[RMDB]
RNA sequence: GGGAACGACUCGAGUAGAGUCGAAAAUUUUCUUAUUAUUCCGAGGAUGUUUCCCAGCCAGGGAUUUUCGUCCUCGAGUUUCUUGAUGGUUCUCCUGCUCUUCCGGAGCUUUCUUUCGAGGUCUUCCAAGCGUGAUGCUUCGGCAUCACGAAAAGAAACAACAACAACAAC
Reactivity to DMS in 0.01 (KOAc 150mM, MgCl2 10mM, bicine 150mM(pH8.5), 24C), signal-to-noise 3, nucleotides 027 to 129: u030u010u000u000c030u020u040a090u010u010a190u050u060c080c030g100a060g000g050a000u020g030u000u050u000c000c040c010a090g090c220c270a040g000g000g000a090u050u030u030u070c000g030u040c020c030u050c020g000a090g020u000u000u000c010u020u020g040a170u050g000g090u010u040c040u000c020c070u000g040c040u010c060u040u000c060c090g000g000a170g040c200u010u060u050c000u000u000u000c040g000a050g000g010u020c030u040u080c020c070a050a040g000
Reactivity to 2A3 in 0.01 (KOAc 150mM, MgCl2 10mM, bicine 150mM(pH8.5), 24C), signal-to-noise 2, nucleotides 027 to 129: u030u030u020u020c010u000u170a250u080u070a130u140u170c080c000g000a000g000g020a010u010g040u020u020u010c000c000c000a040g160c040c030a060g000g000g090a010u130u090u080u110c000g000u030c020c000u000c030g020a000g020u020u040u000c040u010u040g060a050u100g080g020u050u010c000u030c000c000u050g060c010u010c000u120u030c030c030g040g000a000g010c000u000u050u000c000u010u030u020c000g020a050g010g030u000c000u010u000c000c000a030a000g100
An RNA of 170 nucleotides, treated with DMS and 2A3 and read out base by base.